[RMDB]
RNA sequence: GGGAACGACUCGAGUAGAGUCGAAAACUCGUCCGAUUCGACCAUGACGACAAGGGAUUUUAUCUCGUUCUCUUAAUGCGAAUGAUUUUGAAAAGAUGUUGCUUCUGUGACAUUUUUUUUUAAUCAUACUUGCGUACCUCUUCGGAGGUACGCAAGUAAAAGAAACAACAACAACAAC
Reactivity to 2A3 in 0.01 (KOAc 150mM, MgCl2 10mM, bicine 150mM(pH8.5), 24C), signal-to-noise 2, nucleotides 027 to 126: c000u030c000g000u000c020c000g040a050u030u070c020g010a050c100c030a160u200g050a020c030g040a070c040a020a160g070g000g070a040u140u110u140u230a160u090c010u020c020g010u100u000c000u000c000u000u220a110a050u090g140c070g090a050a030u070g000a000u030u040u020u020g040a000a000a000a000g030a000u000g000u000u000g030c010u220u150c080u270g000u010g010a000c000a010u000u000u000u000u000u000u000u000u000a000a000u000c030a000u000